The data come from the RNA Mapping Database (RMDB), library OK2TRN. Chemical mapping of a 177-nucleotide RNA with DMS and 2A3. The reactions ran in a buffer of 150 mM KOAc, 10 mM MgCl2 and 150 mM bicine (pH 8.5), at 24 C. For 2A3 the reverse transcriptase was SuperScript II with manganese. The DMS profile rests on 1,094 reads.
[RMDB]
RNA sequence: GGGAACGACUCGAGUAGAGUCGAAAACGCAGAAUUGACCAAUCCUAAGCCUUGAGCAAUCAGAUAGCCGGGUAAUGAGGUCUGGAUACCGAGCGCGGUUUGUCCACUAUUAAUACCUGACUCGGUAUCGGGAGAGUAAGUUCGCUUACUCUCCCGAAAAAGAAACAACAACAACAAC
Reactivity to DMS in 0.01 (KOAc 150mM, MgCl2 10mM, bicine 150mM(pH8.5), 24C), signal-to-noise 2, nucleotides 027 to 126: c120g020c140a100g010a170a120u000u000g000a030c020c020a140a100u010c040c030u010a140a300g010c000c020u000u000g030a080g020c060a120a050u000c190a120g010a190u010a050g010c040c040g000g000g000u000a010a130u000g000a090g000g010u000c040u000g000g000a040u000a000c040c000g020a030g000c020g010c220g000g010u000u000u010g000u000c080c050a140c130u000a140u000u000a050a080u000a040c030c000u010g000a200c000u000c010g000g000u000a030
Reactivity to 2A3 in 0.01 (KOAc 150mM, MgCl2 10mM, bicine 150mM(pH8.5), 24C), signal-to-noise 1, nucleotides 027 to 126: c050g020c080a030g080a160a180u080u080g010a050c030c000a020a080u110c010c020u050a050a000g010c000c030u180u290g080a060g070c000a070a130u130c020a080g060a240u120a040g000c050c030g020g070g000u060a080a090u100g060a060g020g000u010c030u030g060g030a030u010a000c010c010g000a020g000c090g000c060g010g130u050u060u100g060u070c080c040a020c090u130a060u300u210a040a140u100a050c000c000u000g040a080c000u030c030g000g000u000a000